RNA sequence: GGGAACGACUCGAGUAGAGUCGAAAAUCAUGCUAUCACCUGCUAACUGUGUGUCGUACAGUUAGUUCUGAGCGAGAGUUCAGGAGGUGUCUUUGUACGACACGAAGACGCUAAGGUGAUAGCAUGCCUAGUAGUAUCAAUUCGUUGAUACUACUAGAAAAGAAACAACAACAACAAC
Reactivity to 2A3 in 0.01 (KOAc 150mM, MgCl2 10mM, bicine 150mM(pH8.5), 24C), signal-to-noise 9, nucleotides 027 to 126: u090c000a000u000g000c000u000a000u000c000a000c000c000u000g000c010u020a070a080c010u030g020u010g010u010g060u170c040g050u060a000c000a010g010u030u030a010g000u020u000c000u000g000a000g000c010g010a050g000a010g060u010u010c000a000g020g030a030g050g090u100g090u050c020u020u050u020g020u030a060c060g050a020c100a000c040g010a010a000g010a000c040g000c020u050a050a020g000g000u000g000a000u000a000g000c000a000u000g000c000
Reactivity to DMS in 0.01 (KOAc 150mM, MgCl2 10mM, bicine 150mM(pH8.5), 24C), signal-to-noise 9, nucleotides 027 to 126: u020c010a000u000g010c000u000a010u000c000a000c000c000u000g010c020u000a070a120c030u000g010u010g010u010g010u010c160g010u010a040c000a010g010u000u000a040g010u000u000c000u000g000a010g010c000g010a230g000a220g020u000u000c000a010g010g010a050g010g010u000g010u000c030u000u000u000g010u000a060c140g010a070c110a030c000g010a040a010g000a100c110g010c010u000a060a020g010g010u000g000a010u000a000g000c000a000u000g000c250